[RMDB]
RNA sequence: GGGAACGACUCGAGUAGAGUCGAAAAGCUGCCUCUGACGUCCUUCUCCCCCGGAAACGGGGCCGAAGGGUGGUAAAGCGUGUCGCCUGGCGCUUGCACGGGUAUGCGUGGCGGUCGACCCUGGCCGCCCAUGGCUCGAUUUCGAUCGAGCCAUGGGAAAAGAAACAACAACAACAAC
Reactivity to DMS in 0.01 (KOAc 150mM, MgCl2 10mM, bicine 150mM(pH8.5), 24C), signal-to-noise 5, nucleotides 027 to 126: g000c010u000g000c010c000u010c190u000g010a210c050g010u000c000c000u000u000c000u000c300c000c000c000c010g010g000a080a070a190c010g010g000g010g040c060c070g000a010a020g010g010g000u000g010g010u010a070a050a030g010c000g010u000g000u010c100g020c070c060u000g000g000c010g010c030u000u000g010c040a100c190g010g000g010u000a020u020g010c010g000u000g010g010c000g010g010u000c010g000a170c030c020c020u010g000g000c000c000g000
Reactivity to 2A3 in 0.01 (KOAc 150mM, MgCl2 10mM, bicine 150mM(pH8.5), 24C), signal-to-noise 2, nucleotides 027 to 126: g020c010u020g050c000c010u050c120u120g050a040c010g020u020c000c000u000u030c000u030c000c000c000c000c000g010g000a000a010a000c010g000g000g010g030c000c000g000a000a000g000g010g000u020g020g040u100a100a060a020g000c010g010u030g080u100c090g070c070c050u060g090g010c010g000c040u080u100g000c090a050c070g000g000g020u080a060u300g050c040g020u040g030g000c000g010g000u010c010g060a130c000c010c020u030g030g000c030c010g010